This 177-nucleotide RNA was probed chemically with DMS and 2A3. For 2A3, 55,444 sequencing reads were counted. For DMS, 24,783 sequencing reads were counted.

RNA sequence: GGGAACGACUCGAGUAGAGUCGAAAAUACGCCAAUUUCGAUUGGCGUAACACGCAAACCGGCCGAAAGGCAUUUUAUGCGUACGGUCGCGAAAGCCUAAAAACGCACUGUCAUUCGUGACAGUGAAACUAUCAUGCUAAUUCGUUAGCAUGAUAGUAAAAGAAACAACAACAACAAC
Reactivity to DMS in 0.01 (KOAc 150mM, MgCl2 10mM, bicine 150mM(pH8.5), 24C), signal-to-noise 9, nucleotides 027 to 126: u000a000c000g010c000c000a010a010u000u000u010c180g020a040u000u000g000g000c000g020u000a000a060c150a100c210g000c090a020a080a160c250c020g010g000c000c010g010a060a100a190g000g010c000a010u000u010u010u010a040u000g010c000g000u000a200c030g010g010u000c010g010c060g000a050a070a130g010c010c080u000a020a060a040a080a120c260g000c000a010c000u000g000u000c000a030u000u010c200g010u000g010a010c000a000g010u000g000a020a050
Reactivity to 2A3 in 0.01 (KOAc 150mM, MgCl2 10mM, bicine 150mM(pH8.5), 24C), signal-to-noise 9, nucleotides 027 to 126: u040a000c000g000c000c000a010a010u030u070u110c220g150a030u000u000g000g000c000g000u000a000a020c030a010c040g050c030a030a050a050c010c010g010g010c010c010g130a190a090a030g130g000c000a010u080u120u040u130a070u040g010c000g010u010a040c010g010g000u000c000g010c020g100a120a020a020g020c010c020u190a130a080a020a020a020c100g010c020a000c000u000g000u000c000a020u040u050c190g110u030g000a000c000a000g000u000g010a050a000